[RMDB]
RNA sequence: GGGAACGACUCGAGUAGAGUCGAAAAAAUGUUGAAAUCUUCUUUCUGGAUUUCAGAUUGAGUCUCUUGCCCUAAUUGAUGCAAUUUACACUCCAUGCAUCUCCUUCCCUGGACCUUCUCCAGUUCUUGGGGACUACAGAUGAACUUACUUUUAAUAGAUGAAAAUACCAUUCGUGGUAUUUUCAUCAAAAGAAACAACAACAACAAC
Reactivity to 2A3 in 0.01 (KOAc 150mM, MgCl2 10mM, bicine 150mM(pH8.5), 24C), signal-to-noise 4, nucleotides 027 to 156: a000a000u130g010u050u010g030a030a020a030u010c010u120u000c030u030u220u030c060u080g060g010a080u020u060u050c020a010g010a040u070u080g010a020g030u010c020u000c000u090u090g050c020c000c000u050a060a070u050u110g010a010u010g020c020a040a060u030u080u180a090c070a040c030u080c070c030a030u050g030c000a000u000c010u060c020c010u040u050c000c000c000u000g020g040a040c010c040u110u080c050u000c020c020a040g010u080u020c040u040u060g000g000g010g010a020c020u070a050c050a040g080a050u110g030a090a010c020u110u120a060c090u140u230u220u300a140a230u300a140
Reactivity to DMS in 0.01 (KOAc 150mM, MgCl2 10mM, bicine 150mM(pH8.5), 24C), signal-to-noise 1, nucleotides 027 to 156: a130a020u000g030u010u000g030a070a050a050u020c010u000u000c080u000u010u000c080u010g000g000a050u010u000u000c010a050g020a110u000u000g010a140g000u010c040u000c080u020u000g040c030c020c000u010a060a160u000u010g020a070u000g000c040a080a060u000u000u000a140c080a110c060u000c100c020a100u010g030c050a090u000c020u000c050c000u000u000c010c040c000u000g000g000a090c000c110u010u010c050u010c010c040a110g010u010u000c020u000u000g020g020g020g040a090c050u000a060c060a060g000a120u000g000a050a090c090u000u000a080c070u020u000u000u000a060a190u000a190

Source information:
This 207-nucleotide RNA was probed chemically with 2A3 and DMS. The DMS profile rests on 2,331 reads.